[RMDB]
RNA sequence: GGGAACGACUCGAGUAGAGUCGAAAAGAUAUGGAUUUAGAGGAGAUGAAUGUGAUGGACAUGAAGCGUGGUCGGAAACGACCAUACUUCAACAGCCAUACAUUCAUCUCCUCUAAAUCCUAAGUCAGUUUGCAAGUAUGUUCGCAUACUUGCAAACAAAAGAAACAACAACAACAAC
Reactivity to DMS in 0.01 (KOAc 150mM, MgCl2 10mM, bicine 150mM(pH8.5), 24C), signal-to-noise 1, nucleotides 027 to 126: g010a060u020a300u010g010g000a020u000u000u000a000g050a010g000g010a040g000a020u010g010a040a000u000g000u000g010a020u000g000g000a010c110a300u000g000a010a000g000c000g080u000g000g030u000c010g010g020a060a070a300c020g020a000c010c010a000u000a020c000u000u000c020a020a050c240a200g000c020c000a000u010a000c010a000u020u000c000a000u000c000u000c000c020u000c010u000a000a010a010u000c000c000u010a010a060g020u000c050a170
Description
An RNA of 177 nucleotides, treated with DMS and read out base by base. The data come from the RNA Mapping Database (RMDB), library TTRINS. DMS adducts were read by reverse transcription with MarathonRT.